This 177-nucleotide RNA was probed chemically with 2A3 and DMS. 2A3 adducts were read by reverse transcription with SuperScript II with manganese. The reactions ran in a buffer of 150 mM KOAc, 10 mM MgCl2 and 150 mM bicine (pH 8.5), at 24 C.
[RMDB]
RNA sequence: GGGAACGACUCGAGUAGAGUCGAAAAACGGCCGAAUGAACUAGCCCUGAAAAUGGAUGGCGCUCAAGUGUAUUACCUAUACUCUGCCGUUAGUAUUCUUUUAAAGAUAUUAACGAGUAGGCAGGCGGUUCUGGUGAUAUUUCGAUAUCACCAGAACAAAAGAAACAACAACAACAAC
Reactivity to 2A3 in 0.01 (KOAc 150mM, MgCl2 10mM, bicine 150mM(pH8.5), 24C), signal-to-noise 6, nucleotides 027 to 126: a000c020g040g010c010c010g060a060a100u140g020a040a040c030u020a030g020c010c000c020u030g060a080a060a030a030u120g050g010a040u040g030g000c010g000c010u030c050a090a080g030u020g020u090a080u080u130a070c000c020u050a030u030a150c040u020c010u040g010c010c000g000u000u000a000g000u000a030u180u120c000u020u180u040u220a170a300a010g000a000u000a000u000u010a000a000c000g010a030g090u020a010g020g010c030a020g050g000c000g050
Reactivity to DMS in 0.01 (KOAc 150mM, MgCl2 10mM, bicine 150mM(pH8.5), 24C), signal-to-noise 3, nucleotides 027 to 126: a080c070g000g020c010c020g020a100a050u030g000a070a040c050u010a110g000c030c020c010u010g000a090a040a040a140u020g000g000a050u000g000g010c040g000c060u010c070a090a040g020u010g000u000a050u020u010a100c030c020u000a150u020a090c140u030c020u010g010c000c000g000u010u000a000g010u000a000u040u000c020u000u010u020u040a090a110a040g000a020u000a000u000u000a000a010c000g010a090g000u000a060g000g020c130a050g000g010c160g000